[RMDB]
RNA sequence: GGGAACGACUCGAGUAGAGUCGAAAACCAUUUCUAGAGGAGGUAAUGAGGCCAUUGAGAGGCCUGAUAAGGACUGUCCCUCUCCCCUAGCCUACGCCUGUUGGUUCCUGUUCUGAAAUUCCCAUUCGAUAAUACUAUCCUUCGGGAUAGUAUUAUCAAAAGAAACAACAACAACAAC
Reactivity to DMS in 0.01 (KOAc 150mM, MgCl2 10mM, bicine 150mM(pH8.5), 24C), signal-to-noise 9, nucleotides 027 to 126: c010c010a160u020u010u020c120u010a060g010a090g010g020a100g010g010u000a060a070u010g010a050g010g000c010c030a120u020u030g010a160g020a160g010g000c020c010u000g000a050u010a110a100g010g000a040c050u010g000u010c090c010c010u000c020u010c020c010c020c010u000a070g000c070c020u010a060c110g000c030c020u000g010u000u000g010g010u000u000c030c010u000g000u000u000c030u010g010a070a070a220u000u000c000c000c000a170u020u020c130
Reactivity to 2A3 in 0.01 (KOAc 150mM, MgCl2 10mM, bicine 150mM(pH8.5), 24C), signal-to-noise 9, nucleotides 027 to 126: c000c000a050u060u120u050c080u090a050g000a040g070g020a030g020g030u090a100a090u150g070a020g010g030c030c030a100u110u260g110a160g030a050g070g010c000c000u000g020a040u030a040a050g080g010a020c030u060g070u100c010c010c010u010c020u010c010c000c000c010u020a030g000c000c000u050a050c030g010c000c010u080g040u130u090g050g020u040u030c010c010u040g050u050u050c030u040g050a090a080a090u020u000c010c000c000a010u080u090c040
Conditions: 150 mM KOAc, 10 mM MgCl2 and 150 mM bicine (pH 8.5), 24 C. Chemical mapping of a 177-nucleotide RNA with DMS and 2A3. Reactivities are given for positions 27 through 126.